Chemical mapping of a 207-nucleotide RNA with 2A3 and DMS.
RNA sequence: GGGAACGACUCGAGUAGAGUCGAAAAAAUGCCGCCUCAGUUCCAAGCUCUUUCGUGGCACUGUAAACAGUCCUAUUGAGUUAGGGCCAGUCAACCACGUUGCGAAGCUAAAUUAUCUGGUCGAGAGUUACGAUUCCCUACUUCGGUAGGGAAUCAACAGUUAUACUGCGUUCGCGCAGUAUAACUGAAAAGAAACAACAACAACAAC
Reactivity to 2A3 in 0.01 (KOAc 150mM, MgCl2 10mM, bicine 150mM(pH8.5), 24C), signal-to-noise 5, nucleotides 027 to 156: a000a010u090g030c020c000g030c030c010u030c020a060g010u090u070c030c010a040a010g000c000u000c000u010u050u030c040g010u010g000g030c160a010c010u030g040u110a070a110a090c030a050g010u010c000c000u020a030u040u120g150a220g300u040u020a010g000g000g000c010c000a010g020u030c010a020a050c000c000a010c020g000u000u030g040c100g100a060a020g010c010u050a060a060a040u240u160a090u050c070u060g000g040u060c030g050a020g000a000g170u070u080a050c080g010a000u000u000c000c000c000u000a000c010u020u050c110g080g000u000a000g000g000g000a000a000u000c000a000a000
Reactivity to DMS in 0.01 (KOAc 150mM, MgCl2 10mM, bicine 150mM(pH8.5), 24C), signal-to-noise 2, nucleotides 027 to 156: a050a080u000g000c030c010g020c020c020u010c030a090g000u000u000c030c040a130a300g000c010u000c030u000u000u000c020g030u010g000g020c040a040c040u000g030u000a090a090a060c100a100g000u000c000c020u000a020u010u010g030a300g020u010u000a020g000g010g000c070c000a060g010u010c020a050a050c010c020a040c090g020u000u000g030c070g020a120a100g030c020u020a040a020a040u010u000a090u000c050u010g010g030u000c030g000a140g010a120g000u000u000a050c090g010a010u000u000c000c000c000u000a020c000u000u000c230g030g030u000a010g010g000g000a000a000u000c000a040a100
The 2A3 profile rests on 3,416 reads. DMS adducts were read by reverse transcription with MarathonRT.